[RMDB]
RNA sequence: GGGAACGACUCGAGUAGAGUCGAAAAGGGAACUGAAAAGGAUAGGGCUUUAUGCGGCUAGGAUCGAAACAUCGCCCGCUUUAUGGAUUGCUGCUCUCGCUUCUGGCGGGCAUCGCAAUUUCGACGAGAGCAUAGCAGUAUUCGUACUGCUAUGCUCAAAAGAAACAACAACAACAAC
Reactivity to DMS in 0.01 (KOAc 150mM, MgCl2 10mM, bicine 150mM(pH8.5), 24C), signal-to-noise 5, nucleotides 027 to 126: g000g010g000a070a060c080u000g000a080a070a070a040g010g000a080u010a080g000g000g000c070u000u000u010a060u020g010c060g020g020c070u010a090g010g010a070u000c060g010a070a060a090c170a090u010c130g010c030c010c020g010c070u000u010u000a080u010g010g000a060u010u010g020c020u010g000c040u010c040u010c070g000c030u000u000c190u000g000g020c030g000g000g010c030a030u000c120g000c090a060a070u000u000u000c030g000a070c150g010a170
Reactivity to 2A3 in 0.01 (KOAc 150mM, MgCl2 10mM, bicine 150mM(pH8.5), 24C), signal-to-noise 3, nucleotides 027 to 126: g050g000g000a040a040c050u070g050a020a050a050a050g060g020a030u080a060g040g020g000c010u070u130u060a080u180g030c040g020g000c020u030a060g020g060a110u030c020g020a020a060a010c040a040u070c050g010c000c010c010g030c020u030u100u080a130u170g060g010a040u000u110g000c010u010g020c010u000c010u030c060g010c000u080u080c020u100g010g000c010g010g010g000c010a000u040c020g000c000a020a090u020u060u090c040g040a020c060g030a040